[RMDB]
RNA sequence: GGGAACGACUCGAGUAGAGUCGAAAAAUUGGGCCUCUGCUUGCAUUGCAUCUCCUAAUAUCUUAUUGUUCAAGCAAAUCCCAUGGCCAAGCUCAUUGUCAGUGUGGGAGGGGACUACAUAAGGGUUUGAACACUCUGUUGGGGCCCACCAGUGUUACAGUUUUAAUGAUUUCGAUCAUUAAAACUGAAAAGAAACAACAACAACAAC
Reactivity to 2A3 in 0.01 (KOAc 150mM, MgCl2 10mM, bicine 150mM(pH8.5), 24C), signal-to-noise 3, nucleotides 027 to 156: a000u100u060g000g000g010c020c010u000c020u020g000c020u060u050g020c030a170u030u150g060c050a080u090c070u130c090c060u120a210a170u060a230u180c110u160u170a180u080u120g060u050u090c030a030a040g000c010a030a060a130u080c020c020c000a020u040g040g000c010c000a020a020g010c060u080c070a120u130u150g110u120c090a080g050u010g050u040g070g020g020a030g000g000g020g000a010c020u040a020c100a040u100a050a150g050g020g000u020u030u080g030a010a010c030a020c060u090c050u060g100u070u070g010g030g000g060c090c000c000a010c020c000a020g020u040g000u110u110a020
Reactivity to DMS in 0.01 (KOAc 150mM, MgCl2 10mM, bicine 150mM(pH8.5), 24C), signal-to-noise 2, nucleotides 027 to 156: a130u010u010g020g040g040c000c000u010c080u000g030c030u000u000g020c070a160u000u000g030c060a150u000c010u010c060c050u000a080a190u010a040u010c080u000u000a090u000u010g010u000u000c040a100a040g010c030a040a090a080u010c000c030c020a110u000g010g000c010c020a070a110g000c020u010c030a090u000u010g030u000c070a060g010u020g020u000g000g020g010a120g000g010g030g010a080c020u030a040c020a090u000a110a070g020g010g020u000u000u010g000a100a130c060a030c080u000c010u010g000u000u000g000g040g050g030c010c010c010a000c040c020a070g010u000g020u010u000a190
Structure probing data (2A3 and DMS) for a 207-nucleotide construct. The reactions ran in a buffer of 150 mM KOAc, 10 mM MgCl2 and 150 mM bicine (pH 8.5), at 24 C. Reactivities are given for positions 27 through 156.